Source: RMDB library OK1LIB, as collected in RNAgym. An RNA of 177 nucleotides, treated with DMS and 2A3 and read out base by base. Values cover nucleotides 27 to 126. For DMS, 11,202 sequencing reads were counted.
RNA sequence: GGGAACGACUCGAGUAGAGUCGAAAAUAAUAUCGCGCUGUCGCUUUGAAUAGGAAUAACAAGGUACUGUUGAGUUUUGUUAUGUACUCGGUCCCUCAUUUGGUUCUUUUUUUUAGUAUUCGCAUCCUGAAGGACUCUAAUUCGUUAGAGUCCUUCAAAAAGAAACAACAACAACAAC
Reactivity to DMS in 0.01 (KOAc 150mM, MgCl2 10mM, bicine 150mM(pH8.5), 24C), signal-to-noise 4, nucleotides 027 to 126: u050a100a090u030a080u000c040g010c040g000c040u000g010u010c010g000c020u000u040u000g000a080a100u020a060g000g000a110a030u020a040a060c080a050a040g020g010u000a040c070u010g000u000u000g000a170g000u000u010u010u000g020u000u000a040u010g010u020a090c020u000c020g000g000u000c010c010c020u000c050a050u010u000u010g000g010u000u010c010u000u000u000u000u000u020u020u000a050g000u000a110u000u010c050g000c040a080u010c050c050
Reactivity to 2A3 in 0.01 (KOAc 150mM, MgCl2 10mM, bicine 150mM(pH8.5), 24C), signal-to-noise 4, nucleotides 027 to 126: u220a020a090u060a040u100c020g020c000g010c020u010g100u060c050g010c100u090u050u070g040a090a020u070a120g030g060a030a040u060a050a020c050a050a020g070g030u060a040c050u070g190u250u100g030a070g030u010u020u060u020g090u090u070a160u140g030u080a060c010u000c010g040g030u110c020c010c000u030c070a110u040u050u080g020g000u010u010c010u030u040u140u000u010u000u060u020a060g040u040a190u050u040c030g010c040a040u010c010c050